RNA sequence: GGGAACGACUCGAGUAGAGUCGAAAACGCCAGCUUGUGGGCCAGGGUCUUUAGCGUCUCGUGGGACAGACAGUCGACGUGUUCCAGACCGCGUUCUCGGGCGACGCGUUCCAGCCAGGGAUUGGCGUUGACCACGUCGUCCCACACGUGCCGCGCCUCUCACAAAAUAGUUCGCUAUUUUGUGAGAAAAAGAAACAACAACAACAAC
Reactivity to 2A3 in 0.01 (KOAc 150mM, MgCl2 10mM, bicine 150mM(pH8.5), 24C), signal-to-noise 4, nucleotides 027 to 156: c050g040c020c000a030g040c070u100u090g000u100g060g030g000c030c040a080g040g020g030u070c050u080u140u150a030g000c000g020u030c030u020c120g010u020g010g000g000a020c040a090g000a000c010a030g040u030c010g020a000c010g040u060g070u060u040c010c000a020g020a040c000c020g010c020g020u050u000c110u060c110g050g050g030c050g000a000c000g000c010g010u030u000c040c030a080g050c060c080a090g050g000g020a080u140u210g170g000c000g000u000u010g000a000c010c010a130c140g010u000c000g010u000c000c030c000a000c000a000c000g020u010g020c030c010g010c000g010c020c000
Reactivity to DMS in 0.01 (KOAc 150mM, MgCl2 10mM, bicine 150mM(pH8.5), 24C), signal-to-noise 1, nucleotides 027 to 156: c040g000c030c000a050g020c020u000u000g140u020g020g010g010c030c060a090g010g020g030u010c050u000u030u000a120g040c020g040u000c040u010c060g000u000g020g030g020a080c030a040g000a090c050a120g020u010c000g020a040c040g040u000g040u050u000c030c040a200g000a060c060c030g010c020g000u000u000c020u010c070g010g030g020c080g000a010c020g000c010g010u040u000c060c050a160g000c030c040a120g010g000g010a070u000u000g030g000c000g030u010u000g020a080c050c020a050c090g000u000c010g000u000c000c000c010a050c020a070c050g000u010g020c060c030g000c040g010c060c050